This 207-nucleotide RNA was probed chemically with 2A3. Conditions: 150 mM KOAc, 10 mM MgCl2 and 150 mM bicine (pH 8.5), 24 C.
[RMDB]
RNA sequence: GGGAACGACUCGAGUAGAGUCGAAAAGGGGUCACGUGUAUGCUCCUGCAAGGAUGCACACUGAAGCCUCCACGGUGUGUUUCGAUCUGAUGACCAGGAGCUAAGCACGUGACGGAGGCACCCAAAAGAGUCCACACUGUUCGCAGUGUGGACUCAACGUCUUCAUUCAGUUCGCUGAAUGAAGACGAAAAGAAACAACAACAACAAC
Reactivity to 2A3 in 0.01 (KOAc 150mM, MgCl2 10mM, bicine 150mM(pH8.5), 24C), signal-to-noise 2, nucleotides 027 to 156: g080g000g050g000u030c010a010c080g000u020g000u030a050u300g010c000u000c000c000u000g000c030a080a100g050g000a020u090g000c000a010c000a010c000u020g020a110a030g010c010c000u010c030c000a020c010g000g020u020g000u000g040u020u280u300c160g090a100u040c010u050g120a160u040g060a230c010c020a010g000g010a030g000c010u070a180a030g010c010a000c000g000u010g000a000c000g000g010a000g000g000c010a020c020c000c000a080a070a040a060g000a000g000u000c020c000a000c010a010c000u030g000u130u100c220g020c150a000g000u030g010u010g000g000a000c000u000c000a000a000
For 2A3, 1,776 sequencing reads were counted.
Source: RMDB library RNAMAK, as collected in RNAgym.